[RMDB]
RNA sequence: GGGAACGACUCGAGUAGAGUCGAAAAGAUAUGGACGAGAGCGGAGGCGUUUGACGGAUUUCGGAAACGAAAUCCCGAGCUCCCCACCCGUGAUCGUCCUAAGUCAAAAUCAGCCUUCGGGCUGAAAGAAUAAAAUCCAGUUCGCUGGAUUUUAUUCAAAAGAAACAACAACAACAAC
Reactivity to 2A3 in 0.01 (KOAc 150mM, MgCl2 10mM, bicine 150mM(pH8.5), 24C), signal-to-noise 1, nucleotides 027 to 126: g000a020u070a050u140g010g000a010c000g000a000g000a000g000c010g020g000a030g050g020c070g010u080u110u170g050a070c030g000g000a000u000u010u000c000g000g040a070a080a050c000g000a010a000a000u000c010c000c010g010a000g030c010u030c040c030c000c030a080c010c010c000g000u020g010a030u000c000g000u000c010c000u020a050a000g000u000c010a000a020a030a300u020c010a000g010c000c000u060u130c260g130g000g000c000u000g000a000a000a000
Reactivity to DMS in 0.01 (KOAc 150mM, MgCl2 10mM, bicine 150mM(pH8.5), 24C), signal-to-noise 4, nucleotides 027 to 126: g000a060u010a300u000g010g010a000c000g000a020g000a300g010c000g000g000a080g020g010c220g020u000u000u010g010a170c300g020g000a010u000u000u000c000g010g000a090a080a190c000g010a000a000a000u000c000c000c010g000a080g010c000u000c040c030c060c060a300c110c020c000g010u000g000a210u000c010g000u000c000c000u000a010a060g000u010c060a060a100a130a100u000c020a000g010c000c000u000u010c260g010g000g010c000u000g000a010a040a080
Annotation
An RNA of 177 nucleotides, treated with 2A3 and DMS and read out base by base. It was measured as part of the RMDB library TTRDEL. Conditions: 150 mM KOAc, 10 mM MgCl2 and 150 mM bicine (pH 8.5), 24 C. Values cover nucleotides 27 to 126.